Chemical mapping of a 177-nucleotide RNA with DMS and 2A3.
RNA sequence: GGGAACGACUCGAGUAGAGUCGAAAACGUCACGAGUACUGGCGCGAAGCCCCGGCUGGCCAGUCGGCAACCCUCCUCCGCGGCGGGGUGCCCCGGGUGAGGACACGGCCGACUGCGACCGCAGCCGAGUGCGAAUGGUGUUCGCACCAUUCGCACUAAAAGAAACAACAACAACAAC
Reactivity to DMS in 0.01 (KOAc 150mM, MgCl2 10mM, bicine 150mM(pH8.5), 24C), signal-to-noise 1, nucleotides 027 to 126: c020g000u000c040a010c100g010a230g000u000a280c200u040g000g100c020g000c060g070a100a190g040c050c010c010c000g070g070c010u000g020g000c040c000a000g000u000c000g000g100c010a150a080c140c010c000u000c000c020u000c000c000g000c300g000g010c080g030g000g000g020u060g000c000c000c040c010g010g000g070u000g000a010g000g010a000c130a140c300g000g000c000c000g010a000c000u000g000c040g010a010c030c030g010c030a000g010c000c000g000
Reactivity to 2A3 in 0.01 (KOAc 150mM, MgCl2 10mM, bicine 150mM(pH8.5), 24C), signal-to-noise 2, nucleotides 027 to 126: c010g010u010c000a010c060g030a030g170u300a080c070u010g010g020c000g000c040g050a030a020g030c000c000c000c000g000g000c000u000g000g000c020c000a000g000u000c000g000g000c000a020a060c000c000c000u000c000c000u010c000c010g000c030g000g000c030g020g260g050g190u300g000c000c010c000c010g000g000g000u000g000a000g000g020a050c040a010c120g020g010c000c000g000a000c000u000g000c010g040a160c000c040g000c030a000g010c000c000g020
DMS adducts were read by reverse transcription with MarathonRT. The reactions ran in a buffer of 150 mM KOAc, 10 mM MgCl2 and 150 mM bicine (pH 8.5), at 24 C. For 2A3, 1,417 sequencing reads were counted.